[RMDB]
RNA sequence: GGGAACGACUCGAGUAGAGUCGAAAAGAUAUGGAUGUAUAGGGAGCGUUUUCGGAAACGAAUACGCAUCGAUCUAUGACAUCCUAAGUCAAAGUACUGUUAUUAGGUUCGCCUAAUAACAGUACAACUCACCUCCUACGUUCGCGUAGGAGGUGAGAAAAGAAACAACAACAACAAC
Reactivity to DMS in 0.01 (KOAc 150mM, MgCl2 10mM, bicine 150mM(pH8.5), 24C), signal-to-noise 2, nucleotides 027 to 126: g020a010u000a300u010g000g010a000u000g000u000a020u000a010g000g000g000a040g080c000g000u010u000u000u010c000g020g000a080a170a160c000g020a020a000u000a000c000g000c000a240u010c170g000a040u010c010u020a000u000g000a030c000a000u000c000c010u010a050a160g000u000c040a130a130a150g000u000a000c000u020g020u000u000a000u000u000a010g020g010u000u000c290g040c000c000u000a000a000u000a000a000c010a010g010u000a010c000a020a020
Reactivity to 2A3 in 0.01 (KOAc 150mM, MgCl2 10mM, bicine 150mM(pH8.5), 24C), signal-to-noise 2, nucleotides 027 to 126: g030a000u070a020u120g010g000a000u000g020u010a000u020a020g030g020g040a030g000c030g020u010u010u010u040c040g000g000a080a050a040c000g000a030a000u050a030c030g000c020a010u160c010g010a030u040c010u010a010u050g150a030c000a010u000c000c010u020a130a020g030u020c080a210a050a050g000u000a010c020u000g000u020u000a010u010u010a000g040g010u020u060c290g140c090c010u000a000a000u000a000a010c000a000g000u010a000c000a000a000